[RMDB]
RNA sequence: GGGAACGACUCGAGUAGAGUCGAAAAAGUUUAUCAGAGUGGCAGCGGCGACUUAUUUAUAUUUUGCCACGGCGUUUGCGUGUCAGCUGGUGUCAAAGGCCGGCUAAGCAAAAUAUUUACAAUGCAGACCUAUUAUUUAUUUCGAUAAAUAAUAGGUAAAAGAAACAACAACAACAAC
Reactivity to DMS in 0.01 (KOAc 150mM, MgCl2 10mM, bicine 150mM(pH8.5), 24C), signal-to-noise 3, nucleotides 027 to 126: a070g010u010u010u010a070u030c050a060g000a160g030u000g000g010c010a090g030c040g000g030c110g010a030c090u030u030a060u030u010u010a010u010a020u000u000u000u010g000c000c040a040c020g010g060c130g020u000u010u020g010c030g000u010g000u040c160a050g020c070u000g010g020u010g010u030c170a070a090a110g010g000c000c010g000g000c060u000a040a110g000c000a010a020a030a010u000a000u020u030u020a050c140a040a120u040g020c120a110g010
Reactivity to 2A3 in 0.01 (KOAc 150mM, MgCl2 10mM, bicine 150mM(pH8.5), 24C), signal-to-noise 3, nucleotides 027 to 126: a000g100u110u080u080a150u150c040a010g060a020g120u090g060g010c020a030g030c050g100g020c030g010a020c010u070u080a050u140u250u010a020u010a010u030u020u020u010g010c010c000a010c000g020g040c060g070u050u150u160g030c030g000u070g090u090c020a000g040c040u050g000g050u050g050u170c050a080a040a020g060g030c010c000g000g020c030u040a040a010g000c000a000a000a050a000u030a020u020u240u060a070c100a090a090u190g040c040a030g080
An RNA of 177 nucleotides, treated with DMS and 2A3 and read out base by base. Reactivities are given for positions 27 through 126. The reactions ran in a buffer of 150 mM KOAc, 10 mM MgCl2 and 150 mM bicine (pH 8.5), at 24 C. For DMS the reverse transcriptase was MarathonRT. It was measured as part of the RMDB library OK1LIB. The DMS profile rests on 4,370 reads.